RNA sequence: GGGAACGACUCGAGUAGAGUCGAAAAUGGUACACAAUGUAGAGUGUGACUGCGUAACGACCAAGAGAUAUCACGUUGGCCCCAGGACCAAGCAGGGAGAGAAAGGAUGAGCAAACUCUUAGAGGAGGAUUGGAAAAGGAGCCUGGAUUCUGCGUGAACGCCACGUCGUAUUCGUACGACGUGGCGUAAAAGAAACAACAACAACAAC
Reactivity to 2A3 in 0.01 (KOAc 150mM, MgCl2 10mM, bicine 150mM(pH8.5), 24C), signal-to-noise 1, nucleotides 027 to 156: u090g000g010u040a030c020a000c060a030a130u060g030u090a050g060a080g140u030g010u020g110a110c040u030g040c080g050u060a050a040c100g030a050c040c000a150a000g000a000g020a120u070a050u170c010a000c020g010u050u010g040g020c050c000c000c000a010g000g010a030c050c000a020a000g000c030a010g110g010g080a030g000a000g000a010a110a000g090g040a100u100g000a000g000c020a020a080a110c040u050c010u010u090a020g030a010g070g000a020g050g000a050u090u000g040g020a000a030a040a010g010g020a040g010c010c010u000g040g000a040u100u020c000u070g030c020g000u000g020a090